The data come from the RNA Mapping Database (RMDB), library 15KLIB. Structure probing data (DMS and 2A3) for a 170-nucleotide construct. For 2A3 the reverse transcriptase was SuperScript II with manganese. DMS adducts were read by reverse transcription with MarathonRT.
[RMDB]
RNA sequence: GGGAACGACUCGAGUAGAGUCGAAAACGGGCCCCCUCCCAGGAAUGGGAAUGGGGGGAGAUCGACCGGGUCCCGCAGAACCCGAUGGAGUUCCCAACCUUCCCCUUACGGACAAAAGCUGGUCCCGAUGCUCAAGGGUUCGCCCUUGAGAAAAGAAACAACAACAACAAC
Reactivity to DMS in 0.01 (KOAc 150mM, MgCl2 10mM, bicine 150mM(pH8.5), 24C), signal-to-noise 9, nucleotides 027 to 129: c050g000g000g000c030c020c000c020c010u030c000c000c000a020g000g100a110a150u000g010g020g000a150a050u050g000g000g000g000g000g000a030g030a070u060c070g020a110c040c000g000g000g030u030c020c020c030g040c120a100g010a090a070c030c010c010g030a030u000g050g020a150g000u010u010c000c000c000a130a080c060c040u010u040c020c010c010c060u050u070a170c100g000g010a050c070a050a080a080a100g020c110u040g010g010u000c000c000c040g000a090u070g000
Reactivity to 2A3 in 0.01 (KOAc 150mM, MgCl2 10mM, bicine 150mM(pH8.5), 24C), signal-to-noise 9, nucleotides 027 to 129: c010g010g060g010c000c000c000c000c000u060c000c000c010a030g060g170a140a130u060g010g000g010a030a090u200g040g000g010g000g060g000a030g020a080u130c040g040a060c030c020g000g000g020u030c030c030c010g000c010a040g030a070a040c010c000c010g020a030u110g080g030a060g020u050u050c000c000c000a020a060c010c010u030u040c010c010c000c000u060u110a050c040g030g010a010c030a030a130a010a020g060c060u080g040g010u020c010c000c000g030a040u150g020